[RMDB]
RNA sequence: GGGAACGACUCGAGUAGAGUCGAAAACUGUACACGGUCCUGUUCGCGACGGGGUUGCCCAUCACCGCGAUCAUGGUGCCGGUCUACGGGAUGUUCGUGCAGGCCGACCUGUUGAACUCUCUGACGGCCACGACCCUGUUCCUGUCGGCGAGCACGCCGUGUAAAACAGGUUCGCCUGUUUUACACGAAAAGAAACAACAACAACAAC
Reactivity to 2A3 in 0.01 (KOAc 150mM, MgCl2 10mM, bicine 150mM(pH8.5), 24C), signal-to-noise 7, nucleotides 027 to 156: c020u040g040u100a020c140a020c080g010g000u020c010c000u020g000u010u000c020g000c010g020a040c040g010g010g030g090u240u300g190c000c010c000a030u080c040a010c040c000g010c020g010a030u040c030a060u260g020g000u130g050c000c020g020g030u010c030u050a030c050g050g020g020a070u110g030u070u070c040g010u030g010c010a040g160g000c030c030g070a150c000c050u070g010u090u140g050a050a040c000u010c000u000c080u150g050a060c060g030g010c030c040a080c060g090a160c010c000c020u030g020u030u030c010c010u030g020u040c010g030g030c020g030a030g010c030a020c030g040c020
Reactivity to DMS in 0.01 (KOAc 150mM, MgCl2 10mM, bicine 150mM(pH8.5), 24C), signal-to-noise 4, nucleotides 027 to 156: c030u000g020u010a070c100a100c010g010g000u010c030c010u000g030u000u010c020g010c010g010a080c300g010g000g010g030u000u010g020c020c020c040a130u000c020a150c070c020g030c040g010a020u000c020a030u000g030g010u000g020c020c040g020g000u010c020u000a060c050g030g000g010a110u010g020u010u000c000g040u010g020c010a090g020g030c030c080g010a150c020c050u000g000u000u010g000a060a080c050u000c040u000c050u010g010a110c030g030g010c000c030a180c070g000a070c000c010c010u000g010u000u000c020c010u000g000u000c010g010g020c020g020a240g020c020a030c020g010c030